Chemical mapping of a 207-nucleotide RNA with 2A3. It was measured as part of the RMDB library OK3TST. For 2A3 the reverse transcriptase was SuperScript II with manganese. For 2A3, 298 sequencing reads were counted.
RNA sequence: GGGAACGACUCGAGUAGAGUCGAAAAUCAACAUGAGACUUGGUGGGACCAAAAAAAAACAUAUCUAAGUUCUAACAGGCCUCCACUGAUACGUCUCUGGCUAGAAACGGUAGGAGUGCCUCCUUACAGCUACAAUGCCACCACAGCAGAGGGGAUGGCUUUUCUUGAUCUUCGGAUCAAGAAAAGCAAAAGAAACAACAACAACAAC
Reactivity to 2A3 in 0.01 (KOAc 150mM, MgCl2 10mM, bicine 150mM(pH8.5), 24C), signal-to-noise 1, nucleotides 027 to 156: u100c040a100a100c060a140u230g010a000g050a080c030u030u100g000g000u000g000g000g000a110c000c000a080a000a030a000a000a000a000a000a000c120a030u300a060u180c130u180a130a090g080u130u000c010u040a090a060c010a100g000g000c000c010u190c080c000a010c000u010g050a050u080a240c130g010u000c000u000c060u080g060g000c010u140a060g090a040a180a060c100g030g010u110a090g110g060a030g080u100g120c000c050u140c000c000u040u040a040c050a030g000c000u080a050c050a090a030u140g080c000c000a040c110c000a080c150a000g170c010a030g000a100g150g000g010g000a040u040g090